[RMDB]
RNA sequence: GGGAACGACUCGAGUAGAGUCGAAAAUGGGCAGAGAUGUGCACAUGGUACCAGCCUAUGCCAGGAGCAGCGGCCUCCAGCACCCCACUGUCAGGGAGUCCUUGGCCCAGUAGAGGAUGGUUAGCAGUCCUACAGAUCCGUUCGCGGAUCUGUAGGAAAAAGAAACAACAACAACAAC
Reactivity to DMS in 0.01 (KOAc 150mM, MgCl2 10mM, bicine 150mM(pH8.5), 24C), signal-to-noise 2, nucleotides 027 to 126: u000g000g000g060c040a050g010a110g010a090u010g030u000g010c060a120c080a130u000g010g020u010a070c100c110a100g010c040c030u010a070u010g000c040c050a100g000g000a110g040c060a060g000c160g020g000c090c010u000c020c030a090g010c060a100c080c050c040c010a140c120u000g010u020c050a060g020g010g020a110g010u000c020c020u000u010g010g000c020c040c010a070g030u020a080g000a070g000g010a050u000g010g030u020u010a140g010c080a080g000

Conditions: 150 mM KOAc, 10 mM MgCl2 and 150 mM bicine (pH 8.5), 24 C. This 177-nucleotide RNA was probed chemically with DMS. It was measured as part of the RMDB library OK2TRN. For DMS, 1,539 sequencing reads were counted.